[RMDB]
RNA sequence: GGGAACGACUCGAGUAGAGUCGAAAAAAGGGGGUCUAAGGAAUCUUCUCUUCUCUUUUACAGUAUGGUGAUUGAACUAUGAUUCCUAGACAAUUCUUGAUCACUAUUCUUAUCUGCCUCCUCCAAGUCUGUGCCACCCUCGCUCUGGUGGCCAACGCAUAUCGUUCGUCUUCGGACGAACGAUAUGAAAAGAAACAACAACAACAAC
Reactivity to 2A3 in 0.01 (KOAc 150mM, MgCl2 10mM, bicine 150mM(pH8.5), 24C), signal-to-noise 3, nucleotides 027 to 156: a000a030g010g000g000g000g000u010c030u060a050a040g020g010a010a000u000c020u140u020c040u010c030u170u040c030u050c000u010u110u060u110a130c080a090g140u220a110u220g030g030u050g050a080u110u030g060a070a030c050u040a150u290g000a020u030u030c010c000u010a020g010a010c000a020a100u080u060c050u060u140g020a060u050c040a020c020u030a060u120u080c060u060u130a090u070c030u040g050c000c010u020c000c000u060c010c010a080a020g040u030c090u070g080u160g030c000c000a000c010c010c000u090c030g040c060u080c060u090g040g000u000g000g020c000c000a010a000c020g020
Reactivity to DMS in 0.01 (KOAc 150mM, MgCl2 10mM, bicine 150mM(pH8.5), 24C), signal-to-noise 2, nucleotides 027 to 156: a040a080g040g010g000g050g020u000c010u000a040a100g010g010a070a050u000c030u000u010c060u000c020u000u000c040u000c030u000u000u000u010a120c120a220g010u010a130u010g020g040u010g010a070u000u000g010a050a060c040u010a080u010g020a090u000u010c020c010u000a070g010a060c080a050a100u000u010c080u000u000g010a100u010c030a010c050u000a080u000u000c030u000u000a030u020c020u000g020c030c000u000c020c030u000c020c050a040a240g020u010c090u000g020u010g030c040c010a030c010c000c040u000c150g030c110u000c070u000g030g060u000g010g010c000c000a030a030c070g000
This 207-nucleotide RNA was probed chemically with 2A3 and DMS. DMS (dimethyl sulfate) methylates the pairing face of unpaired adenines and cytosines. The data come from the RNA Mapping Database (RMDB), library OK3TST. Conditions: 150 mM KOAc, 10 mM MgCl2 and 150 mM bicine (pH 8.5), 24 C. The 2A3 profile rests on 1,566 reads.